[RMDB]
RNA sequence: GGGAACGACUCGAGUAGAGUCGAAAAUUAAGUUAUCCUAUAAUAAGAGAGAGCGAAUGUGUUCAUUCAAAGGAGUUCCAUAAAUCAGAUGAAACCGAGUAAGAUUAUAAUGAUUAUCGCACUAUCGCGGACUAUAGACAUUCGUGUCUAUAGUCCGAAAAGAAACAACAACAACAAC
Reactivity to DMS in 0.01 (KOAc 150mM, MgCl2 10mM, bicine 150mM(pH8.5), 24C), signal-to-noise 1, nucleotides 027 to 126: u000u030a060a180g000u010u000a080u010c000c010u000a040u000a100a040u010a100a060g010a070g000a010g010a040g000c080g000a070a030u000g000u000g000u000u000c040a040u000u000c090a070a110a120g000g000a060g000u000u000c020c010a020u000a010a110a170u010c220a100g020a080u010g000a020a050a050c070c050g000a100g000u000a040a110g010a120u020u010a060u020a070a030u020g010a060u000u000a070u000c030g000c050a090c060u030a080u000c060g050
Reactivity to 2A3 in 0.01 (KOAc 150mM, MgCl2 10mM, bicine 150mM(pH8.5), 24C), signal-to-noise 1, nucleotides 027 to 126: u130u110a080a030g060u050u040a050u030c000c000u060a050u040a300a140u150a100a010g030a010g000a000g000a000g080c020g020a090a040u100g100u000g030u090u020c020a030u100u030c050a050a050a040g000g010a080g000u030u020c000c000a000u130a090a050a100u170c060a080g050a100u090g010a060a000a000c050c000g040a010g090u050a080a110g000a050u080u160a050u200a110a060u030g040a050u100u040a090u180c020g030c030a020c080u070a080u120c080g050
Record summary: An RNA of 177 nucleotides, treated with DMS and 2A3 and read out base by base.